An RNA of 177 nucleotides, treated with 2A3 and DMS and read out base by base. For DMS the reverse transcriptase was MarathonRT. The DMS profile rests on 1,715 reads. Source: RMDB library M2PK50, as collected in RNAgym. Conditions: 150 mM KOAc, 10 mM MgCl2 and 150 mM bicine (pH 8.5), 24 C. For 2A3, 1,899 sequencing reads were counted. 2A3 adducts were read by reverse transcription with SuperScript II with manganese.
RNA sequence: GGGAACGACUCGAGUAGAGUCGAAAAGGAACGUUGUUCGCAACGUUCCGUGCCGGAAACGGUCAUGACGAUCGCGCGCAUGUCGGGAAACCGUAAACGCGAGCAUCAUGGUGUUCGCACCAUGAAAUUAGUGUCUCUUCUUCGGAAGAGACACUAAAAAAGAAACAACAACAACAAC
Reactivity to 2A3 in 0.01 (KOAc 150mM, MgCl2 10mM, bicine 150mM(pH8.5), 24C), signal-to-noise 2, nucleotides 027 to 126: g000g020a000a020c020g000u000u000g010u060u140c190g020c110a010a000c010g000u000u010c000c000g000u030g000c000c000g050g020a070a110a020c000g010g040u070c060a070u060g100a090c060g040a070u000c020g020c000g000c010g000c060a030u070g070u120c000g040g040g070a050a020a020c040c000g030u080a050a040a080c030g000c040g020a010g050c030a050u020c010a000u000g000g010u030g020u010u050c210g000c050a000c010c000a010u010g020a000a050a010
Reactivity to DMS in 0.01 (KOAc 150mM, MgCl2 10mM, bicine 150mM(pH8.5), 24C), signal-to-noise 2, nucleotides 027 to 126: g000g020a020a000c010g020u000u000g030u000u000c270g020c010a010a000c000g020u000u000c000c010g000u000g020c000c030g030g010a080a090a120c000g010g010u010c060a060u000g010a070c100g000a100u000c050g000c000g000c030g000c090a200u000g000u010c030g000g000g000a080a070a160c010c030g000u010a020a070a120c020g000c000g000a030g000c250a110u000c000a000u000g010g040u000g010u000u010c160g030c020a020c000c010a000u000g000a060a080a130